The record gives the reactivity of an RNA of 177 nucleotides to 2A3 and DMS. 2A3 adducts were read by reverse transcription with SuperScript II with manganese. The RNA was probed in 150 mM KOAc, 10 mM MgCl2 and 150 mM bicine (pH 8.5) at 24 C. For DMS the reverse transcriptase was MarathonRT. DMS (dimethyl sulfate) methylates the pairing face of unpaired adenines and cytosines.

RNA sequence: GGGAACGACUCGAGUAGAGUCGAAAAGUCCACAGCUACUGGUCUGCAGCUGCUGUCAAUCGUAGCAGCUGUGGCAUUCCACUGUGGGAAAGGAAGUGUUACACAGUUAAAUACCUCUUUCUUAUCCUCCUGAGAAAUCUUUCGAGAUUUCUCAGGAAAAAGAAACAACAACAACAAC
Reactivity to 2A3 in 0.01 (KOAc 150mM, MgCl2 10mM, bicine 150mM(pH8.5), 24C), signal-to-noise 5, nucleotides 027 to 126: g030u000c000c000a010c000a010g040c050u210a060c090u150g030g060u070c000u020g030c020a000g000c010u010g020c010u060g120u140c080a160a220u200c130g070u100a010g000c010a000g000c000u000g000u000g000g010c010a020u080u010c010c020a010c000u000g000u010g010g020g020a030a000a000g020g030a000a020g010u020g040u160u170a050c140a010c060a090g030u120u180a110a080a070u150a110c020c030u040c000u000u000u000c010u030u070a090u090c010c020
Reactivity to DMS in 0.01 (KOAc 150mM, MgCl2 10mM, bicine 150mM(pH8.5), 24C), signal-to-noise 4, nucleotides 027 to 126: g010u040c000c000a000c000a000g010c170u040a080c180u010g020g000u030c000u000g020c000a010g000c000u000g020c000u000g010u060c070a150a140u040c250g030u000a000g010c000a000g010c000u000g010u010g000g010c260a160u020u010c160c150a150c010u000g010u020g000g000g010a060a040a060g000g020a050a070g000u000g000u010u000a140c150a160c160a110g000u030u010a030a110a120u040a050c030c020u000c040u000u000u000c010u000u010a110u020c140c040